Structure probing data (DMS and 2A3) for a 207-nucleotide construct. It was measured as part of the RMDB library OK3TST. The reactions ran in a buffer of 150 mM KOAc, 10 mM MgCl2 and 150 mM bicine (pH 8.5), at 24 C.

RNA sequence: GGGAACGACUCGAGUAGAGUCGAAAAGGACUUUGCUGGCGUUCACCCUGCUCAUGCAGUAACAACGUAUGCAUUGUCGUCAAAUUAUAAAGUGGGUGAGGGUCUUGCUGCAUUGGUUAAUGCCAAUGUGGGAGACGUCAUACCUUAUAAACACCUACCACUCGAAUAGAUUCGUCUAUUCGAGUGGAAAAGAAACAACAACAACAAC
Reactivity to DMS in 0.01 (KOAc 150mM, MgCl2 10mM, bicine 150mM(pH8.5), 24C), signal-to-noise 2, nucleotides 027 to 156: g020g030a020c020u000u000u000g010c020u010g020g020c000g000u000u000c130a300c170c190c010u020g030c000u010c140a200u000g030c040a030g000u000a100a120c040a070a060c000g020u010a170u000g000c020a040u010u000g020u000c000g030u000c040a050a070a190u000u000a060u000a050a000a060g000u000g000g080g090u000g020a110g020g040g010u000c010u000u000g020c010u000g020c020a000u000u010g000g030u000u000a100a130u000g030c000c000a000a000u020g020u000g000g000g000a020g020a020c020g000u010c020a080u000a030c070c010u020u000a080u010a010a130a120c060a110c020c000u000a260
Reactivity to 2A3 in 0.01 (KOAc 150mM, MgCl2 10mM, bicine 150mM(pH8.5), 24C), signal-to-noise 6, nucleotides 027 to 156: g110g000a010c010u010u010u020g000c000u090g200g030c000g010u010u000c010a070c020c030c000u010g000c030u110c210a190u300g010c020a010g010u080a040a040c070a020a000c020g020u060a030u130g000c010a010u000u040g010u020c020g050u060c040a010a030a110u120u110a060u120a070a120a050g110u130g020g010g010u020g020a030g050g140g010u020c000u010u100g300c000u060g000c000a010u010u010g010g040u100u300a180a070u300g000c000c000a010a000u010g020u020g000g000g010a010g000a010c000g010u000c010a000u070a260c010c000u050u030a070u070a040a040a010c070a030c000c010u030a060